Chemical mapping of a 207-nucleotide RNA with DMS and 2A3. The 2A3 profile rests on 1,737 reads. 2A3 adducts were read by reverse transcription with SuperScript II with manganese. Values cover nucleotides 27 to 156. For DMS, 2,450 sequencing reads were counted. It was measured as part of the RMDB library M2RFPK.
RNA sequence: GGGAACGACUCGAGUAGAGUCGAAAACAUAGCGUUUCACAAUGUGCGCCAUUAACAUUGUUUAUGCAAGCACGUUUCGCAAUGUGCGGCGCAGAAACAUUGCCAACACAAAUACGCUUCACGAUGUAAAACAUCGGUGCGUUCGCGCACCGAUGAAGUCAGUAUGAACCUUCGGGUUCAUACUGACAAAAGAAACAACAACAACAAC
Reactivity to DMS in 0.01 (KOAc 150mM, MgCl2 10mM, bicine 150mM(pH8.5), 24C), signal-to-noise 1, nucleotides 027 to 156: c030a080u000a040g000c000g000u000u000u020c040a090c000a120a010u010g050u000g010c030g000c000c090a100u000u020a070a060c020a020u000u000g000u010u000u000a050u000g040c000a150a190g000c020a050c050g000u010u000u010c250g000c090a000a030u000g010u000g040c060g010g040c020g050c010a050g050a120a070a040c010a050u000u000g000c040c010a070a030c040a080c000a040a080a210u000a010c010g040c000u000u000c050a050c020g010a160u030g010u010a070a090a190a190c020a000u000c000g070g020u010g020c000g050u000u020c290g000c010g030c010a010c010c000g000a000u000g020a030a130
Reactivity to 2A3 in 0.01 (KOAc 150mM, MgCl2 10mM, bicine 150mM(pH8.5), 24C), signal-to-noise 4, nucleotides 027 to 156: c030a060u100a010g030c010g020u030u120u170c080a030c010a030a040u020g010u050g060c010g000c010c030a100u200u160a050a000c000a010u030u020g070u030u100u110a140u120g050c060a070a070g150c060a030c150g040u020u130u170c070g010c010a010a010u000g000u020g010c030g020g000c020g000c010a000g090a000a020a000c020a010u000u010g080c070c030a140a060c120a070c020a100a100a010u200a030c010g010c030u090u110c070a070c090g230a120u120g030u200a000a110a080a060c010a000u000c000g000g000u000g000c020g020u030u080c190g040c010g000c020a000c000c010g000a000u000g000a000a000